[RMDB]
RNA sequence: GGGAACGACUCGAGUAGAGUCGAAAACGGCGGUCUCGGUGGCGGUGAACCUGGCCGGGAUGGUGCCGGGCGAUCCCGACUUCGUCGACUACGUCACCGACUGCGUGAGGCACGCGGGCGUCUCCUGGGACAGGGUGGUCCUGGAGCUGGUCGAGAGGGUAUUGUUCUGUUUCGACAGAACAAUACCAAAAGAAACAACAACAACAAC
Reactivity to 2A3 in 0.01 (KOAc 150mM, MgCl2 10mM, bicine 150mM(pH8.5), 24C), signal-to-noise 2, nucleotides 027 to 156: c050g050g000c030g010g010u030c060u040c030g010g000u020g040g040c030g000g050u060g060a080a100c010c010u020g060g020c000c010g030g030g010a040u070g040g130u090g000c040c000g000g010g000c030g040a030u020c000c000c010g040a080c060u130u100c070g070u000c010g030a050c040u130a070c040g020u030c010a020c020c020g050a090c030u040g000c010g020u040g050a120g120g030c030a010c040g040c000g010g040g010c030g000u020c020u030c020c030u110g020g000g010a000c000a080g100g060g050u040g040g000u020c000c000u000g000g010a010g010c070u130g040g070u050c030g020a020g000a010g060

Structure probing data (2A3) for a 207-nucleotide construct.
Conditions: 150 mM KOAc, 10 mM MgCl2 and 150 mM bicine (pH 8.5), 24 C.
For 2A3, 1,835 sequencing reads were counted.